[RMDB]
RNA sequence: GGGAACGACUCGAGUAGAGUCGAAAAAAAAGAUUUCUGAGACAAACACGCUUCACAAUGUGCGGCAAAGAAACAUUGUUUAUGCAAAGGCACUUCGCAAUGUGUGCUCAAACAUUGCUUAUUCAGAAAAAGAUUUUAGACUUCGGUCUAAAAUCAAGCUUAGGAGGUACUUCGGUACCUCCUAAGCAAAAGAAACAACAACAACAAC
Reactivity to 2A3 in 0.01 (KOAc 150mM, MgCl2 10mM, bicine 150mM(pH8.5), 24C), signal-to-noise 1, nucleotides 027 to 156: a000a000a000a000g070a010u080u080u040c050u110g080a110g070a090c100a050a170a030c120a000c060g000c000u000u010c000a000c000a010a010u030g000u010g010c000g000g090c120a120a100a040g040a010a100a000c020a000u000u000g070u030u100u130a080u050g010c100a180a070a000g140g000c000a000c020u070u030c030g020c020a030a000u000g000u000g100u000g000c090u110c110a030a060a000c000a000u000u000g000c000u020u020a090u050u140c020a010g050a010a060a020a000a020g000a050u000u040u000u000a000g000a000c000u000u010c260g080g000u000c010u010a000a000a000a010u000c000a000a000
The record gives the reactivity of an RNA of 207 nucleotides to 2A3. It was measured as part of the RMDB library M2RFPK. Values are in units of 0.01, from 0 to 300, in steps of 10. The reactions ran in a buffer of 150 mM KOAc, 10 mM MgCl2 and 150 mM bicine (pH 8.5), at 24 C.